This 207-nucleotide RNA was probed chemically with 2A3 and DMS. It was measured as part of the RMDB library ARCHII.

[RMDB]
RNA sequence: GGGAACGACUCGAGUAGAGUCGAAAAGCUCAAUGGUGGAAUUGUACACCUUGGGAUUUCUGACUUUGGUUCAAUCCUCGCAGUCGGACGUAGGUUAGCAUGUCACGUUUCGGCGUGGCAAGGGGUACUCACCUUCCCGUGGGGUCCGCACUGCGCGCUAUUGUUCACUGUUCGCAGUGAACAAUAGAAAAGAAACAACAACAACAAC
Reactivity to 2A3 in 0.01 (KOAc 150mM, MgCl2 10mM, bicine 150mM(pH8.5), 24C), signal-to-noise 6, nucleotides 027 to 156: g030c000u000c010a020a080u260g000g000u040g030g090a250a300u200u180g070u150a040c000a010c000c000u010u010g020g000g000a020u040u030u020c110u110g040a060c010u040u090u130g080g000u090u100c040a020a050u020c020c010u000c010g000c010a020g000u010c000g000g010a010c040g090u100a030g000g010u020u050a020g050c040a050u030g010u000c000a000c020g010u010u060u060c240g100g000c000g000u000g010g000c000a020a060g030g020g000g030u080a070c000u010c030a020c000c000u060u060c000c050c000g030u130g020g070g040g010u000c000c010g000c030a010c010u000g000c010g000c000g000
Reactivity to DMS in 0.01 (KOAc 150mM, MgCl2 10mM, bicine 150mM(pH8.5), 24C), signal-to-noise 2, nucleotides 027 to 156: g010c000u000c000a010a030u000g010g050u000g000g010a090a210u010u000g050u010a100c010a010c000c000u000u010g020g010g000a040u000u000u000c010u010g010a030c020u010u010u000g010g020u020u000c090a070a200u010c070c020u010c010g010c030a020g020u010c030g020g020a050c050g000u000a040g010g000u000u000a090g000c100a150u010g000u000c010a030c000g000u000u000u000c290g040g020c000g000u000g000g040c000a020a080g000g010g020g020u000a100c050u000c050a110c050c050u000u010c110c030c020g030u010g020g030g040g040u000c020c000g020c100a030c020u010g020c030g040c080g010